[RMDB]
Description:
An RNA of 177 nucleotides, treated with DMS and read out base by base. In probing experiments dimethyl sulfate is read out at A N1 and C N3, which are open when not base-paired. For DMS the reverse transcriptase was MarathonRT.
RNA sequence: GGGAACGACUCGAGUAGAGUCGAAAACAAAGAGAGUUCGCUCUCUUUGAAAUACUAAGACCCAAGCUUAGAUGGCCGACACUUCCCUUGGAAACCGGCAAAAAACAGAAGGGUUCGCCCUUCUGAACGACAAGAUACGGUUCGCCGUAUCUUGUCGAAAAGAAACAACAACAACAAC
Reactivity to DMS in 0.01 (KOAc 150mM, MgCl2 10mM, bicine 150mM(pH8.5), 24C), signal-to-noise 1, nucleotides 027 to 126: c000a010a000a000g000a000g040a030g050u000u000c270g000c000u010c000u000c010u000u010u020g020a090a080a110u010a230c020u000a020a000g000a110c040c060c070a090a110g000c090u030u000a010g000a130u000g030g010c000c000g000a010c080a090c120u000u000c020c000c160u020u000g000g030a080a090a090c070c000g000g000c000a000a030a100a060a030a080c030a010g000a020a000g020g020g020u000u010c200g030c000c010c000u000u000c000u000g000a030a140